Chemical mapping of a 177-nucleotide RNA with 2A3 and DMS.
Reactivities are rounded to 0.1 and cut off at 0 and 3.
The DMS profile rests on 7,935 reads.
It was measured as part of the RMDB library OK2TRN.
The RNA was probed in 150 mM KOAc, 10 mM MgCl2 and 150 mM bicine (pH 8.5) at 24 C.
[RMDB]
RNA sequence: GGGAACGACUCGAGUAGAGUCGAAAAGGUCCGAUAUGCCUCCAGCCAGCGCCACACUUCUUCGCAACAUUGUGGCCACCAAAAACGACGAGGAUUUCAUUGCGGCUAUCAAUAAAGGACGGGAAGAAGUAAUUAUUAUCUUCGGAUAAUAAUUACUAAAAGAAACAACAACAACAAC
Reactivity to 2A3 in 0.01 (KOAc 150mM, MgCl2 10mM, bicine 150mM(pH8.5), 24C), signal-to-noise 4, nucleotides 027 to 126: g030g020u010c020c010g020a020u040a030u220g020c000c000u040c030c000a020g030c020c010a080g030c080g000c060c000a030c010a030c020u090u070c020u140u180c070g030c080a040a070c010a120u010u060g000u010g020g000c010c000a010c010c020a010a130a020a020a020c040g120a010c030g030a020g060g010a030u050u140u120c070a060u060u150g030c020g000g000c020u060a040u140c040a060a030u090a210a100a030g040g010a020c020g030g030g010a040a050g040a030
Reactivity to DMS in 0.01 (KOAc 150mM, MgCl2 10mM, bicine 150mM(pH8.5), 24C), signal-to-noise 7, nucleotides 027 to 126: g020g000u000c010c020g000a150u000a050u000g000c020c020u000c040c070a110g020c060c040a120g010c130g020c020c030a040c050a060c150u000u000c050u000u010c090g010c100a090a090c150a070u000u000g020u000g010g000c010c050a090c110c130a030a050a040a080a100c120g010a090c080g000a070g000g010a100u000u010u000c090a070u000u010g020c100g000g000c040u010a070u010c040a070a050u010a040a070a130g000g010a040c030g000g000g010a070a080g010a100